[RMDB]
The data come from the RNA Mapping Database (RMDB), library OK2TRN. This 177-nucleotide RNA was probed chemically with 2A3 and DMS. DMS adducts were read by reverse transcription with MarathonRT. For 2A3, 1,488 sequencing reads were counted. The reactions ran in a buffer of 150 mM KOAc, 10 mM MgCl2 and 150 mM bicine (pH 8.5), at 24 C.
RNA sequence: GGGAACGACUCGAGUAGAGUCGAAAAGCGAUCCCCGCGCUCAUGGAGGCGAAGGAGGCUAGCAUCACGGGAGCCGCGUACAUCAGCGCCUCGUAGAGCCUCAGCUGGCUCUUCAUCUCGCGGUAGGCAUGAUCAAGUCGUUCGCGACUUGAUCAUGAAAAGAAACAACAACAACAAC
Reactivity to 2A3 in 0.01 (KOAc 150mM, MgCl2 10mM, bicine 150mM(pH8.5), 24C), signal-to-noise 1, nucleotides 027 to 126: g040c030g060a150u070c000c020c000c000g060c000g000c010u070c010a040u050g090g000a030g000g020c000g030a040a020g090g060a010g030g000c000u040a060g080c040a160u130c080a020c000g000g000g060a050g150c220c000g000c040g070u160a090c050a220u210c070a050g000c010g000c000c000u020c000g000u020a030g000a010g100c000c020u050c010a040g040c050u040g040g000c020u010c000u180u010c010a020u040c000u000c000g050c050g000g050u130a070g170g000
Reactivity to DMS in 0.01 (KOAc 150mM, MgCl2 10mM, bicine 150mM(pH8.5), 24C), signal-to-noise 2, nucleotides 027 to 126: g010c210g020a100u010c020c010c020c050g010c050g020c150u000c110a100u000g000g020a050g020g000c040g020a130a130g000g020a050g000g000c020u010a120g010c140a160u000c070a050c040g000g000g010a090g050c090c020g010c010g030u000a130c230a150u000c130a130g030c000g010c000c000u000c010g000u000a040g000a030g040c000c000u000c060a070g020c100u000g010g010c030u010c000u000u020c010a010u000c080u000c030g030c060g000g000u010a180g010g000